[RMDB]
RNA sequence: GGGAACGACUCGAGUAGAGUCGAAAAUGGUGUGCAGUGCAUUCAAGCUGCCUCUCACCAACAUCCAGGACGUCACCAAGGUGGAGUGCACUGUGAGAGCACCCGCAGAGGAACCUAGACCGGUGCGUGUACCGCGUAGGUUCGCCUACGCGGUACAAAAAGAAACAACAACAACAAC
Reactivity to 2A3 in 0.01 (KOAc 150mM, MgCl2 10mM, bicine 150mM(pH8.5), 24C), signal-to-noise 1, nucleotides 027 to 126: u110g000g010u020g000u040g100c080a040g060u030g090c010a060u050u230c020a030a050g030c070u030g010c000c000u060c010u040c010a000c000c010a030a030c010a040u120c030c000a030g070g050a040c040g040u140c030a000c040c010a070a100g080g020u030g020g040a110g020u030g070c030a000c120u090g000u050g190a130g000a010g080c010a030c000c020c000g000c020a080g020a040g060g000a060a030c000c000u000a040g040a130c020c060g000g090u030g030c010g020
Reactivity to DMS in 0.01 (KOAc 150mM, MgCl2 10mM, bicine 150mM(pH8.5), 24C), signal-to-noise 2, nucleotides 027 to 126: u010g020g010u000g040u000g020c090a020g040u000g000c020a060u010u010c300a080a240g000c300u000g010c030c020u000c030u000c000a040c030c010a080a230c180a100u010c040c020a100g020g010a090c080g010u010c040a040c040c020a110a070g000g000u000g000g000a090g000u000g000c020a100c000u000g030u000g000a170g010a110g010c050a070c030c010c020g000c050a060g020a130g000g000a140a050c080c040u000a050g000a070c040c040g020g000u000g000c170g030